The record gives the reactivity of an RNA of 207 nucleotides to DMS and 2A3. Values cover nucleotides 27 to 156. The RNA was probed in 150 mM KOAc, 10 mM MgCl2 and 150 mM bicine (pH 8.5) at 24 C. Source: RMDB library RNAMAK, as collected in RNAgym. The DMS profile rests on 2,844 reads.

[RMDB]
RNA sequence: GGGAACGACUCGAGUAGAGUCGAAAAGGACCACGUUCGCGUGGUCCAAAAAGAUAUGGAAGCUACGCGAGGUGGGAGCGUAUAGAUCGGAAACGAUCUGAUACGCUUUGAUCACCUCAGCUUCCUAAGUCAAAAAAUGACGGAUUCGUCCGUCAAAACGAAAUAUUAGCUUCGGCUAAUAUUUCGUAAAAGAAACAACAACAACAAC
Reactivity to DMS in 0.01 (KOAc 150mM, MgCl2 10mM, bicine 150mM(pH8.5), 24C), signal-to-noise 1, nucleotides 027 to 156: g040g020a010c000c010a020c000g010u030u010c300g010c030g040u010g010g000u020c000c050a000a000a030a120a110g020a080u000a300u000g010g010a020a040g000c000u000a090c130g010c060g000a010g060g090u020g000g010g000a010g000c000g000u010a030u010a010g000a030u000c000g040g010a180a090a230c000g040a040u000c000u010g020a030u000a000c000g030c010u000u000u010g010a090u000c010a030c010c000u000c010a040g000c010u000u000c000c040u000a000a050g030u000c040a000a000a060a070a150a100u000g000a020c000g000g000a010u000u020c300g020u000c000c010g040u000c000a020a050a090
Reactivity to 2A3 in 0.01 (KOAc 150mM, MgCl2 10mM, bicine 150mM(pH8.5), 24C), signal-to-noise 2, nucleotides 027 to 156: g010g000a020c000c010a020c010g040u070u060c200g010c000g090u000g010g050u000c000c010a000a000a000a010a000g030a020u050a000u020g000g010a000a000g010c050u110a070c210g080c190g200a010g010g000u010g000g050g020a050g000c010g000u010a000u000a000g000a000u010c000g000g000a040a020a060c010g000a000u000c000u000g010a000u000a000c000g000c000u020u010u020g010a010u010c000a000c010c000u000c000a000g000c000u010u000c000c000u000a050a010g040u000c050a060a000a000a010a010a200u090g000a000c000g000g000a020u060u100c230g060u010c070c000g000u000c020a030a030a000